[RMDB]
RNA sequence: GGGAACGACUCGAGUAGAGUCGAAAAUUUUAAUACCACUAUGCAAGCCAAGUCUAAGUCGCUGAACAUCUAUAAUGUAUUAGGCAUCAGGUAAGUACACAAUUCUCUAAGCGAUGAGAAGCGUGUGAGGUACAUAAGAAUUCGUUCUUAUGUACCUAAAAGAAACAACAACAACAAC
Reactivity to 2A3 in 0.01 (KOAc 150mM, MgCl2 10mM, bicine 150mM(pH8.5), 24C), signal-to-noise 9, nucleotides 027 to 126: u040u040u030u070a080a040u080a070c000c020a030c070u140a070u180g080c050a070a040g010c020c010a060a020g010u010c010u040a030a010g030u030c010g020c040u050g060a090a030c020a050u040c060u160a120u090a230a130u150g060u050a060u030u050a040g040g000c020a070u060c030a060g040g040u090a140a060g110u080a010c010a000c010a020a040u020u000c010u000c000u030a060a090g090c040g070a040u050g010a030g000a020a010g010c010g010u000g010u010g020
Reactivity to DMS in 0.01 (KOAc 150mM, MgCl2 10mM, bicine 150mM(pH8.5), 24C), signal-to-noise 9, nucleotides 027 to 126: u010u030u020u020a070a120u020a150c020c010a100c140u020a080u020g010c090a090a120g010c040c040a090a090g010u000c030u000a040a060g010u000c030g020c020u000g010a090a080c070a030u010c120u020a090u030a090a050u010g000u000a060u010u010a050g000g000c040a060u010c110a080g010g010u010a040a090g020u010a020c010a010c010a030a300u000u000c000u000c000u000a080a100g020c130g010a060u010g000a010g000a020a010g000c300g010u000g010u000g010
Source information
An RNA of 177 nucleotides, treated with 2A3 and DMS and read out base by base. It was measured as part of the RMDB libraries RFM100 and RFMREP. For 2A3 the reverse transcriptase was SuperScript II with manganese.